[RMDB]
RNA sequence: GGGAACGACUCGAGUAGAGUCGAAAAGCUCUGAGAGACAGAUCGAACAACAAAGAGAGAUCGCAAAUCUUAGGGGAGAGAACGAAUCUGUCGUCUUCUCUAGGACAUUGUCGAUCAGAUGUCCAAAGUGCAUUGAUUGGUUCGCCAAUCAAUGCACAAAAGAAACAACAACAACAAC
Reactivity to 2A3 in 0.01 (KOAc 150mM, MgCl2 10mM, bicine 150mM(pH8.5), 24C), signal-to-noise 2, nucleotides 027 to 126: g030c000u000c010u000g000a000g000a000g000a000c000a020g040a000u010c000g040a150a050c030a090a010c000a040a300a040g100a020g020a020g000a010u000c000g000c000a000a020a070u000c000u010u000a000g000g000g000g000a000g000a000g030a070a000c020g030a060a060u170c110u180g080u040c020g150u000c000u000u020c000u000c000u000a000g000g000a000c030a170u080u140g000u010c000g010a020u000c000a000g000a050u040g070u000c010c000a010a090a040
Reactivity to DMS in 0.01 (KOAc 150mM, MgCl2 10mM, bicine 150mM(pH8.5), 24C), signal-to-noise 1, nucleotides 027 to 126: g100c090u060c000u010g000a000g000a300g000a000c030a000g030a080u000c000g000a260a230c060a010a040c150a080a300a160g000a000g000a230g010a030u000c000g090c150a110a040a230u000c000u000u000a000g000g000g000g000a000g000a180g000a090a000c000g050a040a240u000c200u020g010u000c100g000u000c000u000u000c000u000c000u000a000g000g050a000c150a000u010u000g000u000c000g080a210u000c000a000g000a000u000g000u000c000c030a000a110a030
Notes:
This 177-nucleotide RNA was probed chemically with 2A3 and DMS. DMS adducts were read by reverse transcription with MarathonRT. Values cover nucleotides 27 to 126. The DMS profile rests on 809 reads. 2A3 adducts were read by reverse transcription with SuperScript II with manganese. Conditions: 150 mM KOAc, 10 mM MgCl2 and 150 mM bicine (pH 8.5), 24 C. Values are in units of 0.01, from 0 to 300, in steps of 10. The data come from the RNA Mapping Database (RMDB), library OK1LIB.